[RMDB]
Structure probing data (2A3 and DMS) for a 207-nucleotide construct. Conditions: 150 mM KOAc, 10 mM MgCl2 and 150 mM bicine (pH 8.5), 24 C. The data come from the RNA Mapping Database (RMDB), library ARCHII. For DMS, 5,466 sequencing reads were counted.
RNA sequence: GGGAACGACUCGAGUAGAGUCGAAAAUUGCCGAAAGGCUAGGACAAUGGCGGGCUAGUGAAUUGUGUCAGAUCCGGAAGGAAGCAGCACUAAGCAAGUGCCGCCAUGUGUCUGAUUGAAUAAGGAACGUAUAAACAUCUCAGGUUCGCCUGAGAUGGAUCACAUUACGGUUCGCCGUAAUGUGAUCAAAAGAAACAACAACAACAAC
Reactivity to 2A3 in 0.01 (KOAc 150mM, MgCl2 10mM, bicine 150mM(pH8.5), 24C), signal-to-noise 4, nucleotides 027 to 156: u080u030g020c010c000g050a070a050a020g000g020c010u030a010g000g010a000c000a000a010u010g010g000c000g010g000g020c010u040a040g020u040g180a180a300u190u140g000u010g070u100c000a000g000a020u000c010c020g060g100a070a070g020g000a000a010g000c000a000g010c000a010c010u020a040a010g000c020a020a000g000u080g300c000c000g000c000c000a000u010g010u000g000u000c000u000g000a020u060u150g040a040a120u150a120a040g110g000a080a020c050g060u150a060u120a180a060a020c000a010u010c000u000c000a010g040g030u040u090c160g070c060c000u000g000a000g000a000u000g000
Reactivity to DMS in 0.01 (KOAc 150mM, MgCl2 10mM, bicine 150mM(pH8.5), 24C), signal-to-noise 3, nucleotides 027 to 156: u000u010g020c010c010g010a160a130a220g020g030c020u010a160g010g010a060c040a080a040u000g000g020c010g030g000g000c000u000a160g000u000g010a120a200u000u000g010u000g030u000c030a300g000a170u000c010c000g000g050a200a160g010g000a080a040g000c060a170g010c000a020c010u000a090a300g010c050a110a060g010u000g010c000c000g000c010c000a010u000g020u000g000u000c010u000g010a190u010u000g000a090a130u000a100a090g010g010a080a100c090g000u010a100u000a090a100a250c040a020u000c000u000c000a000g000g000u000u000c300g020c020c000u030g010a040g010a000u000g000